[RMDB]
This 177-nucleotide RNA was probed chemically with DMS.

RNA sequence: GGGAACGACUCGAGUAGAGUCGAAAAGAUAUGGAGUGAGAGCUUUUGACGCUUGUAUGGGUCGGAAACGACCCGAAGAGCGAUAAGCUCCCUCCUAAGUCAAAAGACCAAGCUUCGGCUUGGUCAAUCUUGUAAGGACCUUCGGGUCCUUACAAGAAAAAGAAACAACAACAACAAC
Reactivity to DMS in 0.01 (KOAc 150mM, MgCl2 10mM, bicine 150mM(pH8.5), 24C), signal-to-noise 1, nucleotides 027 to 126: g010a060u000a300u000g000g010a080g010u040g000a120g050a010g010c000u000u000u000u000g020a270c020g000c000u000u000g000u020a190u030g000g000g000u010c010g000g000a080a050a290c020g000a010c000c000c000g010a090a240g010a000g010c030g000a070u000a010a010g020c010u010c000c030c030u000c000c000u000a000a060g000u010c040a120a110a160a060g000a000c010c000a010a030g000c030u000u000c280g000g010c000u000u000g000g010u000c000a020a010

Annotation: The DMS profile rests on 676 reads. Reactivities are given for positions 27 through 126.